The data come from the RNA Mapping Database (RMDB), library M2PK50. The record gives the reactivity of an RNA of 177 nucleotides to DMS and 2A3. For 2A3 the reverse transcriptase was SuperScript II with manganese.
RNA sequence: GGGAACGACUCGAGUAGAGUCGAAAACACACAAGGUUCGCCUUGUGUGCAAGAAUAGACGUAUACUACCGUAGAAGUAUUCAGGUCACAUAACUACGGAAAUGGCGUUCUGCUUCGGCAGAACGAAUCUGUCAGGACAUUUCGAUGUCCUGACAGAAAAAGAAACAACAACAACAAC
Reactivity to DMS in 0.01 (KOAc 150mM, MgCl2 10mM, bicine 150mM(pH8.5), 24C), signal-to-noise 1, nucleotides 027 to 126: c000a010c000a000c000a000a000g020g020u000u010c250g070c010c000u000u010g000u000g000u000g000c070a070a060g000a090a070u010a050g000a050c120g000u000a020u000a020c020u000a070c010c000g000u000a000g030a170a080g000u000a030u000u010c080a070g010g000u050c090a070c070a090u000a040a100c040u000a000c000g000g000a190a090a060u000g000g010c030g000u000u000c000u020g000c000u000u000c140g010g000c000a000g000a000a000c000g010a030a060
Reactivity to 2A3 in 0.01 (KOAc 150mM, MgCl2 10mM, bicine 150mM(pH8.5), 24C), signal-to-noise 2, nucleotides 027 to 126: c010a000c000a000c000a000a000g040g000u050u070c160g090c060c000u000u030g000u010g000u010g020c010a030a040g050a060a050u110a090g070a040c060g090u140a030u040a100c030u060a170c010c000g000u010a000g000a130a000g010u020a020u040u140c060a040g030g150u130c040a030c010a170u190a220a100c010u010a000c010g030g030a040a090a030u130g150g030c020g000u010u020c000u010g000c000u040u040c140g150g000c000a000g000a010a000c000g000a000a040